Overview:
The data come from the RNA Mapping Database (RMDB), library TTRDES. Chemical mapping of a 177-nucleotide RNA with DMS and 2A3.
RNA sequence: GGGAACGACUCGAGUAGAGUCGAAAAGAUAUGGAUCCGCCAUGGAGCUGGUGGUCGGAAACGACCACUCAGCGAUGAAAUGGAGUGGGAUCCUAAGUCAAACCGUAGUGCGUUCGCGCACUACGGAGAAUUUACUAGGCUUCGGCCUAGUAAAUUCAAAAGAAACAACAACAACAAC
Reactivity to DMS in 0.01 (KOAc 150mM, MgCl2 10mM, bicine 150mM(pH8.5), 24C), signal-to-noise 1, nucleotides 027 to 126: g000a010u000a030u020g010g010a000u000c000c000g000c000c000a010u010g000g020a010g010c000u000g010g030u000g000g000u000c000g030g010a010a010a060c000g010a000c000c000a000c000u020c040a000g000c000g020a070u000g010a120a160a020u000g000g000a300g010u020g030g010g010a010u010c000c000u010a010a090g010u000c000a110a130a270c010c000g010u010a000g020u000g010c020g000u000u010c240g010c020g040c000a000c000u000a000c000g030g040a030
Reactivity to 2A3 in 0.01 (KOAc 150mM, MgCl2 10mM, bicine 150mM(pH8.5), 24C), signal-to-noise 1, nucleotides 027 to 126: g010a010u000a010u070g020g010a010u000c020c040g030c020c060a010u010g060g030a030g030c010u010g070g000u010g020g040u000c000g000g000a010a000a020c000g000a000c000c030a000c060u180c000a000g000c000g010a030u010g000a000a010a000u010g010g020a110g270u300g210g030g010a000u020c000c000u010a000a000g000u000c010a090a000a100c010c000g020u000a000g000u010g050c000g040u040u090c300g000c010g000c180a000c010u000a000c000g000g010a010

The RNA was probed in 150 mM KOAc, 10 mM MgCl2 and 150 mM bicine (pH 8.5) at 24 C.